[RMDB]
RNA sequence: GGGAACGACUCGAGUAGAGUCGAAAACACACACUAAGGUUCUUGAGAUAGAACCCAACUCUGCUAUCUCAAGUUCUAGUUGGCAAGUUAGACAUCGAAAUGUCUACUUGUAAGUGUGUGGAGACAAGAUAGUAUUCUCUUUCGAGAGAGUGCUAUCAAAAGAAACAACAACAACAAC
Reactivity to DMS in 0.01 (KOAc 150mM, MgCl2 10mM, bicine 150mM(pH8.5), 24C), signal-to-noise 9, nucleotides 027 to 126: c000a010c010a000c000a010c000u010a110a100g000g000u000u000c000u000u000g010a010g000a010u000a010g000a090a120c110c080c110a070a100c170u030c120u040g000c000u000a000u000c000u000c000a010a010g000u000u000c010u000a110g010u010u010g000g000c000a010a000g010u020u030a000g010a010c000a010u010c300g010a090a130a130u010g000u000c000u000a010c000u000u000g000u000a040a020g010u000g000u000g000u000g000g010a090g010a100c140a080a100
Reactivity to 2A3 in 0.01 (KOAc 150mM, MgCl2 10mM, bicine 150mM(pH8.5), 24C), signal-to-noise 9, nucleotides 027 to 126: c010a000c000a000c000a000c010u050a050a090g110g000u000u000c000u000u000g000a010g000a000u000a010g050a060a040c000c010c000a040a060c030u100c080u130g020c000u000a000u000c000u000c000a000a000g000u000u000c010u010a020g030u020u040g030g000c000a000a000g000u110u100a000g010a000c000a010u050c170g200a180a190a070u030g000u000c000u000a000c000u000u000g010u010a050a030g000u000g000u000g000u000g010g010a030g020a010c050a040a040